[RMDB]
RNA sequence: GGGAACGACUCGAGUAGAGUCGAAAAAUGCCGCAUUCAGAGACGGUAACUCUAGUGGGCUACUGUCUAUCUAGCGUUGACAUCUACAUACUAUAUAGUAAUACCAAUACUCAAGACUACGAAACGGAUUACUACUGGGCUUCGGCCCAGUAGUAAUAAAAGAAACAACAACAACAAC
Reactivity to DMS in 0.01 (KOAc 150mM, MgCl2 10mM, bicine 150mM(pH8.5), 24C), signal-to-noise 2, nucleotides 027 to 126: a040u000g030c000c010g030c130a060u020u000c220a080g000a010g010a010c010g000g000u040a000a050c010u000c020u040a110g000u030g000g000g000c050u110a020c040u010g010u000c000u050a020u100c040u000a120g000c060g040u030u040g020a120c070a040u010c030u000a050c110a040u000a120c070u010a100u040a250u000a030g000u000a050a060u030a090c050c030a020a030u000a030c010u010c110a000a050g000a020c150u010a010c200g000a120a030a040c090g020g000
Reactivity to 2A3 in 0.01 (KOAc 150mM, MgCl2 10mM, bicine 150mM(pH8.5), 24C), signal-to-noise 3, nucleotides 027 to 126: a030u160g010c030c000g060c040a040u090u130c100a020g020a000g010a080c000g000g000u010a030a010c010u060c030u040a070g070u300g150g000g000c020u050a050c030u080g000u000c010u010a070u030c020u020a010g030c020g030u020u110g000a050c010a030u010c020u010a020c050a090u120a050c040u030a020u090a100u130a300g080u080a120a060u070a160c010c010a090a050u060a100c030u030c060a020a080g020a050c010u060a040c210g100a040a060a010c020g010g020
About this RNA: Chemical mapping of a 177-nucleotide RNA with DMS and 2A3. For 2A3 the reverse transcriptase was SuperScript II with manganese. For DMS the reverse transcriptase was MarathonRT.